Structure probing data (DMS and 2A3) for a 170-nucleotide construct. The data come from the RNA Mapping Database (RMDB), library 15KLIB. Values cover nucleotides 27 to 129. For 2A3, 86,273 sequencing reads were counted. For DMS the reverse transcriptase was MarathonRT.
RNA sequence: GGGAACGACUCGAGUAGAGUCGAAAAUUGAAGGUAAAACAGCCUGUGGGUGAAACACACCCACAGGGCCCAUAGGGCGCUAGCACUCUGGUAUCACGGUACCAUUGUGCGCCUGUUUUACCGAAGGAGACAUUAUGCUUCGGCAUAAUGAAAAGAAACAACAACAACAAC
Reactivity to DMS in 0.01 (KOAc 150mM, MgCl2 10mM, bicine 150mM(pH8.5), 24C), signal-to-noise 7, nucleotides 027 to 129: u020u020g030a110a110g010g010u000a000a000a000a000c000a030g020c000c000u000g040u010g010g010g010u000g010a120a140a100c300a220c000a000c020c000c000a000c010a000g000g000g020c000c000c000a060u060a170g010g010g000c000g010c020u030a060g020c000a020c000u000c000u000g000g000u000a030u020c040a090c280g030g000u000a010c000c000a030u010u000g000u000g020c000g020c020c000u000g030u000u020u000u000a000c010c010g020a030a040g000g000a070g000a120
Reactivity to 2A3 in 0.01 (KOAc 150mM, MgCl2 10mM, bicine 150mM(pH8.5), 24C), signal-to-noise 4, nucleotides 027 to 129: u070u060g030a050a010g000g010u000a000a000a000a000c000a000g000c000c000u000g000u000g000g010g000u000g040a070a130a000c140a010c000a000c060c000c000a000c000a000g000g000g000c000c000c000a040u220a140g000g000g000c030g020c100u120a050g010c000a000c000u010c010u000g000g000u010a010u030c030a050c230g150g010u010a000c000c000a000u000u010g000u000g000c010g000c000c000u000g000u000u000u000u010a000c000c000g000a000a000g020g100a010g000a000